[RMDB]
RNA sequence: GGGAACGACUCGAGUAGAGUCGAAAAUAGACACGGAUCAGCAUCACCUGGGAACCUGUUAGGACUGCAGAUCCAGCAAUCCACGUUUUAAGAGCCCAGGUAAUACUGUUGCAGGCUCAAAUUGGGGCACAGCAAUGUGGUUCGCCACAUUGCUGUGAAAAGAAACAACAACAACAAC
Reactivity to 2A3 in 0.01 (KOAc 150mM, MgCl2 10mM, bicine 150mM(pH8.5), 24C), signal-to-noise 1, nucleotides 027 to 126: u120a010g040a020c040a020c090g060g030a030u010c000a010g010c010a010u010c010a030c000c000u010g000g010g050a090a110c020c030u070g150u170u060a040g030g000a010c010u030g000c000a010g050a150u120c100c040a010g060c000a010a020u000c010c010a010c060g000u030u030u080u200a130a030g030a030g020c000c010c000a000g000g010u010a010a010u060a010c010u010g050u160u060g000c050a060g030g070c020u070c030a120a170a090u210u230g000g000g000g050
Reactivity to DMS in 0.01 (KOAc 150mM, MgCl2 10mM, bicine 150mM(pH8.5), 24C), signal-to-noise 2, nucleotides 027 to 126: u010a070g000a110c100a150c060g000g000a040u000c020a030g000c040a040u010c100a020c010c000u000g000g000g020a170a040c170c050u000g010u020u000a140g020g010a010c020u010g030c090a110g020a120u000c140c150a130g010c050a040a050u000c000c010a210c140g000u000u000u020u020a070a090g000a090g010c010c000c000a030g000g020u000a030a030u000a070c000u000g000u000u010g030c090a070g000g000c040u000c040a030a060a130u000u010g010g000g000g000

Structure probing data (2A3 and DMS) for a 177-nucleotide construct. Reactivities are given for positions 27 through 126. 2A3 adducts were read by reverse transcription with SuperScript II with manganese. For 2A3, 1,017 sequencing reads were counted. The DMS profile rests on 1,238 reads.